[RMDB]
Chemical mapping of a 177-nucleotide RNA with 2A3 and DMS. Conditions: 150 mM KOAc, 10 mM MgCl2 and 150 mM bicine (pH 8.5), 24 C.

RNA sequence: GGGAACGACUCGAGUAGAGUCGAAAAUAAAUGUGCGUACAGCACACUCAGACUGUACGCUAUCUGAGUGUGUCAACUUCAAAGUCCAACGACACACACAAGGCGUUGGAACAAGAGUGUGAGAAAAUAUUCAAGGGUUGUUCGCAACCCUUGAAUAAAAAGAAACAACAACAACAAC
Reactivity to 2A3 in 0.01 (KOAc 150mM, MgCl2 10mM, bicine 150mM(pH8.5), 24C), signal-to-noise 2, nucleotides 027 to 126: u130a000a090a080u190g080u120g080c060g000u040a020c000a020g030c020a010c000a000c010u000c000a010g000a060c020u110g050u230a040c120g090c150u020a020u000c010u000g000a010g010u010g030u010g040u050c010a010a020c030u130u140c060a110a030a030g030u000c000c010a010a000c030g100a080c000a000c010a000c000a010c040a200a030g040g000c030g000u000u000g040g000a090a010c020a010a010g010a000g070u060g000u020g030a070g090a080a150a010a020
Reactivity to DMS in 0.01 (KOAc 150mM, MgCl2 10mM, bicine 150mM(pH8.5), 24C), signal-to-noise 3, nucleotides 027 to 126: u010a040a070a100u000g000u000g000c070g010u000a050c100a160g020c020a020c000a000c020u000c010a060g010a070c090u000g020u000a080c180g030c050u010a070u000c020u000g000a050g020u000g010u000g010u000c020a090a050c060u000u020c070a040a140a180g000u000c010c010a050a020c030g000a080c020a090c130a090c170a110c300a090a060g010g000c000g010u000u000g000g000a020a040c030a070a190g000a040g000u000g000u000g030a100g010a030a050a040a090

For 2A3, 1,903 sequencing reads were counted. The DMS profile rests on 2,104 reads.